[RMDB]
RNA sequence: GGGAACGACUCGAGUAGAGUCGAAAAGAAGGGACGCUGGGCCUGUGGAAAGAGACAUGCGUAAGAACUGAAGCGCGCACGGUUCAACGCAACAGCUCUUUCGUAACAUCAGGCCUGUGCUGAAGCGCGCACGGCAACCGAAAGGUGCGAGAAUUAAUCUGCUAUCAGUGUUCGCACUGAUAGCAGAAAAAGAAACAACAACAACAAC
Reactivity to 2A3 in 0.01 (KOAc 150mM, MgCl2 10mM, bicine 150mM(pH8.5), 24C), signal-to-noise 1, nucleotides 027 to 156: g120a090a110g060g040g040a000c080g000c010u010g000g000g000c000c000u050g000u000g060g010a080a000a000g100a010g070a160c230a270u060g000c010g000u020a270a120g000a000a000c000u010g040a070a020g040c010g000c000g000c000a040c070g000g000u000u000c000a000a000c000g090c000a040a050c030a210g050c030u000c000u000u000u000c000g060u250a110a010c040a060u090c000a020g000g000c020c000u000g100u120g000c070u030g010a070a000g030c000g000c030g000c000a000c000g120g000c000a170a250c000c000g030a180a210a000g020g050u000g010c020g000a060g000a080a060u300u300a060a030
Structure probing data (2A3) for a 207-nucleotide construct. It was measured as part of the RMDB library RNAMAK.